This 177-nucleotide RNA was probed chemically with DMS and 2A3. It was measured as part of the RMDB libraries RFM100 and RFMREP.
[RMDB]
RNA sequence: GGGAACGACUCGAGUAGAGUCGAAAAGAAGUUAAUGACGAGUGCGAGUAGUUAGCUAUGAGUAUGAGUUGUUGAUGGAAGUGGGCGUAACUAAUGGCAUGAGCAUAAGAACCCGUGCAGCUAGAUUCUCCUGAUUUAUAUUCGUAUAAAUCAGGAGAAAAGAAACAACAACAACAAC
Reactivity to DMS in 0.01 (KOAc 150mM, MgCl2 10mM, bicine 150mM(pH8.5), 24C), signal-to-noise 4, nucleotides 027 to 126: g010a170a120g010u000u000a050a040u010g010a040c030g010a210g020u000g000c030g020a200g030u000a020g010u010u030a070g010c010u000a020u010g010a290g020u010a040u000g000a220g000u000u000g020u010u000g020a080u000g000g000a060a070g020u000g000g000g010c090g010u000a040a060c070u010a050a070u010g010g000c030a050u010g000a050g010c050a050u000a060a100g010a080a120c050c010c020g010u000g010c050a060g010c040u010a050g010a160u000u010
Reactivity to 2A3 in 0.01 (KOAc 150mM, MgCl2 10mM, bicine 150mM(pH8.5), 24C), signal-to-noise 4, nucleotides 027 to 126: g100a070a010g010u050u090a020a030u090g020a020c030g040a020g040u040g010c000g010a010g010u020a000g010u070u170a080g070c040u010a020u070g040a030g030u030a030u070g080a060g030u020u010g020u020u020g030a080u020g020g040a060a060g040u070g020g050g030c020g010u050a060a020c050u040a120a050u060g050g000c020a020u080g040a020g030c000a030u060a170a080g040a030a020c010c010c010g000u020g000c030a010g010c010u080a070g000a170u050u000